This 207-nucleotide RNA was probed chemically with 2A3 and DMS. It was measured as part of the RMDB library OK3TST. For 2A3 the reverse transcriptase was SuperScript II with manganese. The reactions ran in a buffer of 150 mM KOAc, 10 mM MgCl2 and 150 mM bicine (pH 8.5), at 24 C. For DMS, 1,186 sequencing reads were counted.
RNA sequence: GGGAACGACUCGAGUAGAGUCGAAAAGAUUUACGAGAGUAAAUCGCAUUUGGAAACAAAUGUAAGCAGGAAUUACGACGCUAACUGCCUACAUUGGUAUCGAACCCAAUGUAGAUAAGUGCUAGUAGAUGGCAGACUACUAGACACAUGCGUUGAACCCAUUAGUCCUCUUCGGAGGACUAAUGGGAAAAGAAACAACAACAACAAC
Reactivity to 2A3 in 0.01 (KOAc 150mM, MgCl2 10mM, bicine 150mM(pH8.5), 24C), signal-to-noise 4, nucleotides 027 to 156: g000a000u010u000u000a000c010g010a010g020a000g080u000a000a010a010u010c010g000c000a000u000u000u010g010g020a040a030a010c000a000a000a010u010g000u040a040a050g010c000a010g010g060a030a050u220u110a230c050g000a000c000g000c000u010a020a000c000u000g000c000c000u000a000c000a000u000u010g010g000u060a100u210c090g060a050a060c000c000c000a000a000u010g000u000a000g010a010u090a090a030g000u010g000c000u000a000g000u010a010g020a080u090g070g060c030a030g030a070c010u010a000c000u010a000g280a010c000a000c000a010u140g000c000g000u000u000g020a020a020
Reactivity to DMS in 0.01 (KOAc 150mM, MgCl2 10mM, bicine 150mM(pH8.5), 24C), signal-to-noise 1, nucleotides 027 to 156: g100a000u000u000u000a000c030g010a300g000a300g000u010a000a020a080u000c040g000c010a090u000u000u060g000g000a170a170a210c060a010a050a030u000g000u000a180a040g000c030a010g000g000a180a090u000u000a090c000g070a000c080g000c000u000a070a300c030u000g000c010c000u000a000c000a000u000u000g010g000u000a300u000c130g000a100a060c120c040c000a000a000u000g000u000a000g000a010u000a000a040g000u040g000c000u000a000g000u000a000g030a100u000g000g060c080a000g000a100c000u000a000c000u000a030g000a210c000a010c060a000u000g010c010g020u000u000g030a060a070